[RMDB]
RNA sequence: GGGAACGACUCGAGUAGAGUCGAAAAUUAGUGUACCUAACACAGUGCAAGGAGAGCCGCGUAGAAACACGAUUGAUUAUGCAACUAGCUCACUACCUACCAAUGCAAAACAGAUUGCACUACGCGAGUGCAUUUACGGAUUCGUCCGUAAAUGCACAAAAGAAACAACAACAACAAC
Reactivity to 2A3 in 0.01 (KOAc 150mM, MgCl2 10mM, bicine 150mM(pH8.5), 24C), signal-to-noise 3, nucleotides 027 to 126: u110u060a080g030u000g010u070a030c020c010u020a130a010c030a010c010a040g110u080g080c020a040a040g070g050a040g060a030g060c020c020g000c010g040u040a020g080a100a150a010c040a040c080g000a040u020u150g080a070u020u200a030u140g030c010a000a050c050u000a010g000c010u020c010a050c060u050a050c020c000u040a080c000c090a060a070u030g040c000a000a090a060a000c020a030g090a060u090u030g050c040a020c030u080a010c030g000c040g020a030
Reactivity to DMS in 0.01 (KOAc 150mM, MgCl2 10mM, bicine 150mM(pH8.5), 24C), signal-to-noise 3, nucleotides 027 to 126: u000u010a060g010u000g000u000a100c030c040u020a040a140c050a060c070a120g020u020g020c050a060a080g000g010a110g010a110g020c100c050g000c040g010u020a060g000a120a140a090c100a030c090g020a080u000u000g020a140u010u000a070u000g000c020a030a040c160u010a050g000c030u000c070a060c090u020a080c190c000u000a100c060c080a080a110u040g010c030a030a040a070a050c250a100g020a100u000u000g030c100a110c010u000a020c050g010c070g000a140